[RMDB]
RNA sequence: GGGAACGACUCGAGUAGAGUCGAAAAAUCCAUACGCACUUUUAUUAAGUGUGAUGUCACCACGCAUACUCUUAGCCUUACUCAACAGCGGAUCACUGGAUAGAUCAAUGGAAGCAUGGAUAACGGACACUCUCCCAAGGUUCGCCUUGGGAGAGUGAAAAGAAACAACAACAACAAC
Reactivity to 2A3 in 0.01 (KOAc 150mM, MgCl2 10mM, bicine 150mM(pH8.5), 24C), signal-to-noise 1, nucleotides 027 to 126: a000u080c050c000a140u160a160c090g000c010a020c030u040u080u040u050a230u280u250a070a000g000u000g020u040g090a040u010g040u060c040a010c100c000a000c030g020c010a000u030a060c000u030c010u050u050a070g000c010c010u050u070a030c030u060c030a080a090c030a100g050c030g030g000a040u000c030a020c070u090g070g020a070u050a110g110a010u080c000a010a070u130g070g060a060a000g000c000a030u000g000g040a030u020a120a010c030g000g000a000
Reactivity to DMS in 0.01 (KOAc 150mM, MgCl2 10mM, bicine 150mM(pH8.5), 24C), signal-to-noise 1, nucleotides 027 to 126: a020u000c050c020a110u000a240c050g020c010a030c000u000u000u020u000a100u020u030a050a040g070u000g010u010g000a090u000g020u010c070a080c070c030a090c060g030c030a100u050a060c080u000c020u000u010a050g000c050c040u000u030a060c080u000c070a100a070c060a030g000c090g030g000a080u020c070a050c090u010g000g010a090u010a060g010a020u000c020a060a090u000g010g000a080a030g020c030a050u000g000g000a090u010a120a120c070g010g010a220